[RMDB]
Structure probing data (2A3 and DMS) for a 177-nucleotide construct. For 2A3, 3,501 sequencing reads were counted. DMS adducts were read by reverse transcription with MarathonRT. Source: RMDB libraries RFM100 and RFMREP, as collected in RNAgym. For 2A3 the reverse transcriptase was SuperScript II with manganese. Conditions: 150 mM KOAc, 10 mM MgCl2 and 150 mM bicine (pH 8.5), 24 C.
RNA sequence: GGGAACGACUCGAGUAGAGUCGAAAAUGUGUGGCUGGACCCGCCCAGCAGUGGGUGCAGCCUGGUACCAGACAGCCCCACCCUGACCUAGAGCAAAUGCUCGGGGCGCUCCCCUGGGCUUGAAACUUACUCAGAAUUACUUCGGUAAUUCUGAGUAAAAAGAAACAACAACAACAAC
Reactivity to 2A3 in 0.01 (KOAc 150mM, MgCl2 10mM, bicine 150mM(pH8.5), 24C), signal-to-noise 3, nucleotides 027 to 126: u130g050u000g010u030g040g000c010u010g000g120a010c000c010c000g040c010c010c020a070g060c050a010g050u060g000g000g010u050g100c010a000g010c000c000u000g020g010u040a070c020c000a010g050a080c020a030g050c020c000c000c020a030c010c000c010u020g020a030c000c020u050a070g010a000g090c020a100a140a120u240g000c000u010c010g000g000g010g000c060g010c020u030c000c000c000c010u010g030g000g000c000u030u090g030a050a010a010c010u020
Reactivity to DMS in 0.01 (KOAc 150mM, MgCl2 10mM, bicine 150mM(pH8.5), 24C), signal-to-noise 2, nucleotides 027 to 126: u030g020u010g020u000g000g000c000u000g000g000a040c000c000c000g000c010c030c080a200g010c200a100g000u000g000g010g010u000g000c030a020g000c030c000u000g000g010u000a090c030c060a070g020a050c130a120g000c020c010c010c040a110c080c050c010u000g010a100c020c030u010a030g010a080g000c020a100a100a100u020g010c030u010c010g000g000g010g000c060g000c120u010c020c030c000c090u010g020g000g010c060u010u000g000a120a120a120c180u000